Notes: An RNA of 177 nucleotides, treated with 2A3 and DMS and read out base by base. For DMS, 1,480 sequencing reads were counted. For DMS the reverse transcriptase was MarathonRT. It was measured as part of the RMDB library M2PK50. 2A3 is a SHAPE reagent: it acylates the 2'-hydroxyl of flexible nucleotides of all four kinds.

RNA sequence: GGGAACGACUCGAGUAGAGUCGAAAAGCUAGAAGGUUCGCCUUCUAGCAAAGAAAGCGGAAAACACCGAAUUAAAACGGUGAGGGCCGCAACCACCCAUAAAAAGGAUCAACUUCGGUUGAUCCAAGACCUAUCUAUGGUUCGCCAUAGAUAGGUCAAAAGAAACAACAACAACAAC
Reactivity to 2A3 in 0.01 (KOAc 150mM, MgCl2 10mM, bicine 150mM(pH8.5), 24C), signal-to-noise 2, nucleotides 027 to 126: g000c000u000a010g000a010a000g000g010u050u100c130g050c010c010u010u010c000u010a000g000c000a000a000a000g010a020a020a000g000c000g000g000a000a070a030a010c000a000c010c000g020a000a000u230u170a110a090a020a030c000g000g000u010g020a030g020g070g040c020c010g010c020a010a000c010c010a050c000c000c010a020u190a040a110a010a000a020g000g000a010u010c000a000a010c000u050u110c290g130g000u000u000g000a000u010c000c010a000a000
Reactivity to DMS in 0.01 (KOAc 150mM, MgCl2 10mM, bicine 150mM(pH8.5), 24C), signal-to-noise 2, nucleotides 027 to 126: g050c010u010a000g000a000a010g000g000u010u010c260g010c010c000u000u000c000u000a010g010c000a010a050a080g000a090a110a210g030c010g000g000a020a020a100a110c020a020c000c010g000a110a030u000u000a110a060a190a170c020g000g000u000g010a060g000g000g000c000c000g010c000a070a120c170c110a230c010c000c010a100u040a020a050a120a130a100g000g020a020u010c000a000a000c000u000u010c190g000g000u010u020g000a000u000c000c000a010a060